[RMDB]
RNA sequence: GGGAACGACUCGAGUAGAGUCGAAAAAUGUGCUGUGUGUGCACACUCUCUCACACUGGUGUCUGUGUUGGUGUCUGCUAUGUGCAUGUGUGUGCCCAUGCUCACGUGUGUCUAUGUACAGAGGUGCAUCCUGAGGCAGAUUCGUCUGCCUCAGGAUAAAAGAAACAACAACAACAAC
Reactivity to DMS in 0.01 (KOAc 150mM, MgCl2 10mM, bicine 150mM(pH8.5), 24C), signal-to-noise 2, nucleotides 027 to 126: a060u000g040u000g000c080u010g020u000g000u000g000u000g010c040a020c010a050c080u000c060u000c140u010c060a070c060a080c070u010g030g010u000g010u000c080u000g020u000g000u010u000g020g000u010g010u000c040u010g000c100u000a060u010g010u000g000c110a060u000g010u000g000u010g000u000g010c010c040c020a050u000g000c020u010c020a050c050g030u000g020u000g010u000c030u000a080u000g000u010a090c070a080g010a090g000g000u000g020c130